RNA sequence: GGGAACGACUCGAGUAGAGUCGAAAAGAUCUGCGCCGAUCCGAAACGCUAGCAAACAGCCCGCAUCAUGUCGUCUCCUAACUUCGACGUGGUGAAAUACCGAGCUUAUGCGAGUAAGCCUGUUAGCAAUAGAUCAGAACGUUCGCGUUCUGAUCAAGUGUUCACGAUUGUUCGCAAUCGUGAACACAAAAGAAACAACAACAACAAC
Reactivity to 2A3 in 0.01 (KOAc 150mM, MgCl2 10mM, bicine 150mM(pH8.5), 24C), signal-to-noise 2, nucleotides 027 to 156: g030a070u010c000u060g040c050g030c040c000g000a030u070c040c020g110a040a060a010c060g040c080u090a080g050c050a020a030a200c040a060g000c000c000c060g050c000a000u010c000a010u020g020u020c000g020u000c060u120c110c110u150a140a110c090u070u040c020g000a000c020g000u020g000g000u010g040a030a030a000u100a020c050c030g030a000g000c010u000u020a000u090g110c080g050a090g040u020a000a000g000c020c030u070g000u130u070a000g000c050a120a220u030a170g010a020u000c000a000g000a010a000c020g010u020u050c180g000c000g080u010u000c040u000g000a000u000c010a000a000
Chemical mapping of a 207-nucleotide RNA with 2A3. For 2A3, 945 sequencing reads were counted. The reactions ran in a buffer of 150 mM KOAc, 10 mM MgCl2 and 150 mM bicine (pH 8.5), at 24 C. Values cover nucleotides 27 to 156.